[RMDB]
About this RNA
An RNA of 177 nucleotides, treated with 2A3 and DMS and read out base by base. 2A3 adducts were read by reverse transcription with SuperScript II with manganese.
RNA sequence: GGGAACGACUCGAGUAGAGUCGAAAAUCGGCGAAUCGCGGUGGGGCCACCGAAACGACGUUGGGCGCCUGUGCGAUCCGAUGACGGAUUGCGGCGAUUGUCUGGCUAUGUUCGGGUGCGGACGCACCCCAAGCCUGUGAUUCGUCACAGGCUUGGGAAAAGAAACAACAACAACAAC
Reactivity to 2A3 in 0.01 (KOAc 150mM, MgCl2 10mM, bicine 150mM(pH8.5), 24C), signal-to-noise 9, nucleotides 027 to 126: u100c020g010g010c040g070a060a040u070c040g000c040g060g060u130g040g030g030g010c020c010a040c010c020g040a090a080a040c100g120a020c050g030u070u090g050g020g010c060g080c010c020u110g080u120g040c000g010a030u000c000c000g110a140u240g130a070c050g010g010a020u010u050g030c020g030g000c030g050a070u050u090g040u050c030u050g030g000c020u050a040u190g050u010u040c010g030g000g030u080g070c010g040g040a030c050g000c030a060c010
Reactivity to DMS in 0.01 (KOAc 150mM, MgCl2 10mM, bicine 150mM(pH8.5), 24C), signal-to-noise 9, nucleotides 027 to 126: u020c060g010g010c030g010a070a040u010c040g020c020g010g030u010g010g000g010g000c020c020a100c060c020g000a060a080a130c160g000a120c100g020u010u010g010g020g000c060g000c020c020u020g000u040g020c000g000a010u000c000c000g010a210u050g010a150c060g020g000a030u000u010g010c000g010g010c020g010a060u010u020g000u010c020u020g000g000c040u010a080u010g000u010u000c050g000g010g010u010g010c020g000g010a150c110g000c030a060c070